[RMDB]
RNA sequence: GGGAACGACUCGAGUAGAGUCGAAAAGACCUGAUUUUUGAGUUACUUUCCGCCCGCUUGCCUCCCUUCCCCCUCCAAGUGGCACUGUAAAACUCAGGGCGACAAAGAGAGCAGGGUUCGAGGCUUCGCUAAGUAUUGUCUUCGGACAAUACUUAGCAAAAGAAACAACAACAACAAC
Reactivity to DMS in 0.01 (KOAc 150mM, MgCl2 10mM, bicine 150mM(pH8.5), 24C), signal-to-noise 2, nucleotides 027 to 126: g000a030c020c050u000g040a050u000u010u000u000u000g010a090g000u000u010a060c150u000u000u000c050c010g000c020c070c030g110c140u030u020g040c020c090u000c040c030c050u000u000c030c010c000c140c020u000c010c050a110a300g010u000g010g030c000a030c010u030g000u000a040a060a090a120c240u010c010a030g010g010g020c030g000a030c090a060a130a110g020a060g010a080g020c120a080g010g020g010u000u000c070g050a060g030g000c050u000u000c100

The record gives the reactivity of an RNA of 177 nucleotides to DMS. High DMS reactivity at an A or C suggests that its Watson-Crick edge is free. The RNA was probed in 150 mM KOAc, 10 mM MgCl2 and 150 mM bicine (pH 8.5) at 24 C. For DMS the reverse transcriptase was MarathonRT.